RNA sequence: GGGAACGACUCGAGUAGAGUCGAAAACCUGGUUUAGGGUUCCAGGCAAGCCCUAUCUAUCGGUCGAGAUGCGAGCGCUUAAGCUCAAAUUGAGUGGCUGAGUUAGUGGUGAACGUAUCCCUAUGUUAAAACGGUAGCUGCUUCGGCAGCUACCGAACUUACACUGAACCUUCGGGUUCAGUGUAAGAAAAGAAACAACAACAACAAC
Reactivity to DMS in 0.01 (KOAc 150mM, MgCl2 10mM, bicine 150mM(pH8.5), 24C), signal-to-noise 2, nucleotides 027 to 156: c010c010u000g040g000u000u000u000a060g040g070g000u000u010c000c000a100g020g020c020a130a300g000c010c010c020u000a040u010c010u010a100u000c040g060g060u000c010g030a300g010a030u010g000c300g010a040g020c000g070c300u020u010a140a170g020c000u010c010a010a220a080u010u030g010a210g030u010g000g030c010u000g010a090g010u000u000a010g010u000g030g010u000g030a160a100c090g010u000a160u010c000c010c000u010a180u010g000u000u010a070a090a080a160c010g060g030u010a010g050c000u010g020c000u000u030c260g060g020c010a010g000c030u000a010c000c000g000a000a000
Reactivity to 2A3 in 0.01 (KOAc 150mM, MgCl2 10mM, bicine 150mM(pH8.5), 24C), signal-to-noise 3, nucleotides 027 to 156: c020c000u010g000g020u080u070u100a020g000g000g020u030u030c010c020a020g030g010c050a050a000g010c020c020c000u010a020u000c020u040a190u050c010g020g020u010c030g000a030g000a150u010g020c010g020a000g020c070g050c180u240u300a120a050g010c000u000c000a010a030a010u010u030g010a050g040u220g020g000c010u010g000a000g010u000u000a050g000u130g160g020u040g040a090a010c070g050u100a070u130c000c000c010u030a050u080g080u050u100a080a080a000a020c000g000g020u000a000g000c000u010g020c010u050u120c220g070g000c000a000g000c010u000a000c000c000g000a000a000
The record gives the reactivity of an RNA of 207 nucleotides to DMS and 2A3. It was measured as part of the RMDB library M2RFPK. The reactions ran in a buffer of 150 mM KOAc, 10 mM MgCl2 and 150 mM bicine (pH 8.5), at 24 C. For 2A3, 1,423 sequencing reads were counted.